[RMDB]
RNA sequence: GGGAACGACUCGAGUAGAGUCGAAAAGAUAUGGAAACAGCAUCGAUCGUAGGCCUCGGAAACGAGGCUACGGGAGCUGCUUCCUAAGUCAAACUCGCCACUCGAUGUUCGCAUCGAGUGGCGAGAAGCAGUAAUGACAGUUCGCUGUCAUUACUGCAAAAGAAACAACAACAACAAC
Reactivity to 2A3 in 0.01 (KOAc 150mM, MgCl2 10mM, bicine 150mM(pH8.5), 24C), signal-to-noise 1, nucleotides 027 to 126: g030a020u020a040u110g000g030a000a000a000c010a030g030c020a300u230c100g190a100u070c010g000u030a020g300g300c010c000u000c020g020g040a060a040a030c010g000a020g000g050c000u000a000c000g000g020g010a020g000c000u000g020c000u000u000c020c000u030a160a000g060u000c010a030a030a090c000u000c030g000c070c020a000c010u000c000g050a010u020g130u110u200c300g030c160a020u020c000g000a030g030u000g000g000c020g000a000g000a010a000
Reactivity to DMS in 0.01 (KOAc 150mM, MgCl2 10mM, bicine 150mM(pH8.5), 24C), signal-to-noise 1, nucleotides 027 to 126: g010a020u010a300u020g000g000a010a020a050c000a000g000c000a300u010c150g140a120u000c000g010u000a000g010g000c000c010u000c000g020g010a080a070a180c010g000a010g000g000c010u000a000c000g010g000g030a040g020c030u010g000c080u000u000c030c000u010a030a170g020u010c040a100a110a230c000u000c000g000c000c000a000c000u080c000g000a030u000g000u000u010c250g010c000a030u000c010g000a010g030u000g000g040c020g000a000g000a040a060

Chemical mapping of a 177-nucleotide RNA with 2A3 and DMS. For DMS, 862 sequencing reads were counted. The data come from the RNA Mapping Database (RMDB), library TTRDEL. The RNA was probed in 150 mM KOAc, 10 mM MgCl2 and 150 mM bicine (pH 8.5) at 24 C. Values are in units of 0.01, from 0 to 300, in steps of 10.